Structure probing data (DMS and 2A3) for a 177-nucleotide construct. The data come from the RNA Mapping Database (RMDB), library TTRDES. For 2A3, 15,317 sequencing reads were counted.

[RMDB]
RNA sequence: GGGAACGACUCGAGUAGAGUCGAAAAGAUAUGGAUGCUGAGUGCGCAACAGCCUACAUCGGAAACGAUGUAGGACAUGCGUAAACUUGCAUCCUAAGUCAAACACUUUCACUUCGGUGAAAGUGAAGACCUAUUACCUGUUCGCAGGUAAUAGGUCAAAAGAAACAACAACAACAAC
Reactivity to DMS in 0.01 (KOAc 150mM, MgCl2 10mM, bicine 150mM(pH8.5), 24C), signal-to-noise 4, nucleotides 027 to 126: g010a050u000a300u000g000g000a020u000g010c020u020g010a030g040u000g010c010g010c000a040a070c300a190g010c000c000u010a000c000a000u000c000g010g010a150a130a190c000g020a020u000g000u000a010g020g000a000c060a090u010g000c020g020u010a030a070a110c020u000u000g010c000a000u000c000c000u000a030a060g000u000c030a230a190a270c010a010c000u000u000u000c000a000c000u020u020c210g020g010u020g000a000a000a010g000u000g000a070a060
Reactivity to 2A3 in 0.01 (KOAc 150mM, MgCl2 10mM, bicine 150mM(pH8.5), 24C), signal-to-noise 4, nucleotides 027 to 126: g030a020u060a010u170g000g010a000u000g020c120u200g070a040g040u050g010c010g000c020a070a160c070a220g080c000c000u000a000c000a000u010c000g010g030a030a030a020c010g010a010u010g000u010a000g010g000a000c000a040u040g000c020g010u030a190a120a010c020u020u040g000c000a000u000c000c000u000a110a010g060u020c040a040a100a030c010a000c010u000u020u000c010a020c010u040u110c300g170g000u010g010a010a000a000g010u000g010a050a020